Structure probing data (DMS and 2A3) for a 177-nucleotide construct. It was measured as part of the RMDB library OK1LIB. Conditions: 150 mM KOAc, 10 mM MgCl2 and 150 mM bicine (pH 8.5), 24 C.

[RMDB]
RNA sequence: GGGAACGACUCGAGUAGAGUCGAAAAAAGCACCUUUUGUUCGCAACAAGUUUGCUUUGCUAGCCAGACAUCAACACGACAUCGUAGACUGUGCAACGGUUCCACGAGGCGGUACGUGAGGUGGAAAAAAGCAGGAGUGGUUCGCCACUCCUGCUUUAAAAGAAACAACAACAACAAC
Reactivity to DMS in 0.01 (KOAc 150mM, MgCl2 10mM, bicine 150mM(pH8.5), 24C), signal-to-noise 1, nucleotides 027 to 126: a010a000g020c000a080c300c000u050u000u020u000g050u000u000c190g000c120a080a030c100a200a000g000u020u000u000g010c000u000u000u000g000c070u000a150g020c000c130a150g000a080c070a000u000c090a000a030c010a090c020g000a000c020a120u000c000g000u000a060g000a020c020u030g010u070g000c050a000a210c000g000g000u020u000c030c000a030c100g030a080g000g000c070g000g000u000a040c000g000u020g000a280g030g020u000g000g000a020a050a010
Reactivity to 2A3 in 0.01 (KOAc 150mM, MgCl2 10mM, bicine 150mM(pH8.5), 24C), signal-to-noise 1, nucleotides 027 to 126: a000a000g100c040a060c020c000u050u050u100u030g050u000u060c110g000c050a030a130c060a030a030g000u000u000u010g060c060u050u030u000g070c000u010a040g100c000c040a000g040a000c090a070u230c040a070a000c000a000c050g050a000c000a010u000c000g000u000a000g010a080c010u010g030u090g050c020a210a070c110g050g000u000u070c030c000a000c040g000a080g060g000c150g010g050u120a010c070g060u020g000a010g000g030u030g040g000a120a140a000